Chemical mapping of a 207-nucleotide RNA with 2A3.

RNA sequence: GGGAACGACUCGAGUAGAGUCGAAAAUCGGUGAAUCCUCCCCUGAGAGGCCUCUUCCUAGGCCCGGAGUCUAUCUCCAUCUGGUCCGUCCGGGCCCUCUUCGCCGGGGGAGCCCCCUCUCCAUCCUUAUCCUUCUUUCCGAGAAUUCCUUUGAUGUCCACUUAGAUUUGUUCGCAAAUCUAAGUGGAAAAGAAACAACAACAACAAC
Reactivity to 2A3 in 0.01 (KOAc 150mM, MgCl2 10mM, bicine 150mM(pH8.5), 24C), signal-to-noise 1, nucleotides 027 to 156: u100c010g030g030u110g060a070a150u120c010c000u000c010c010c000c000u030g000a030g000a010g020g000c000c000u120c000u140u160c070c060u040a050g000g050c010c030c010g020g000a000g070u000c020u140a120u100c050u120c050c020a090u090c120u260g070g000u000c000c030g090u000c000c020g060g000g000c030c010c000u030c020u110u090c000g110c140c020g050g010g000g000g000a000g060c000c000c010c000c000u060c030u000c030c020a130u020c020c030u030u110a090u110c000c030u110u120c030u100u110u000c060c050g060a070g050a140a100u040u060c060c030u060u100u180g180a110u150g010u030